[RMDB]
RNA sequence: GGGAACGACUCGAGUAGAGUCGAAAAUUUUGGAGGUGCCGGAUGUCGUUCCUGAUUGCUUCGCCGGAGGCGCUAGCGGCGACAGCCACAUAUUUGACAGGUAUCGGUUCGGCAAUCAGCGCGGCGAAUCAGUAUGAGCGUUCGCGCUCAUACUGAUAAAAGAAACAACAACAACAAC
Reactivity to DMS in 0.01 (KOAc 150mM, MgCl2 10mM, bicine 150mM(pH8.5), 24C), signal-to-noise 3, nucleotides 027 to 126: u000u000u020u010g020g010a110g010g000u010g020c030c030g010g000a060u000g010u000c000g000u010u000c040c010u000g010a040u000u010g010c030u000u000c170g020c000c010g020g000a240g020g030c030g010c020u000a070g010c050g030g010c000g000a050c300a100g030c060c110a070c110a110u010a140u000u000u010g010a140c160a090g000g000u010a040u000c040g010g010u000u000c080g000g000c010a060a050u010c030a070g000c160g010c030g000g010c050g020a110
Reactivity to 2A3 in 0.01 (KOAc 150mM, MgCl2 10mM, bicine 150mM(pH8.5), 24C), signal-to-noise 2, nucleotides 027 to 126: u070u070u050u090g070g050a050g020g010u040g050c030c030g040g050a030u100g020u070c010g030u000u020c000c000u010g030a010u000u130g000c010u040u020c010g010c000c030g080g030a150g100g010c010g060c100u050a030g020c000g010g000c000g040a060c060a020g000c050c000a090c010a060u270a130u120u180u170g120a050c030a040g100g000u030a040u120c050g030g000u060u040c000g040g020c000a000a050u050c030a020g060c030g000c000g060g000c010g000a020

Source: RMDB library OK2TST, as collected in RNAgym.
Structure probing data (DMS and 2A3) for a 177-nucleotide construct.
DMS adducts were read by reverse transcription with MarathonRT.
The 2A3 profile rests on 1,563 reads.
The DMS profile rests on 2,633 reads.
2A3 adducts were read by reverse transcription with SuperScript II with manganese.
The reactions ran in a buffer of 150 mM KOAc, 10 mM MgCl2 and 150 mM bicine (pH 8.5), at 24 C.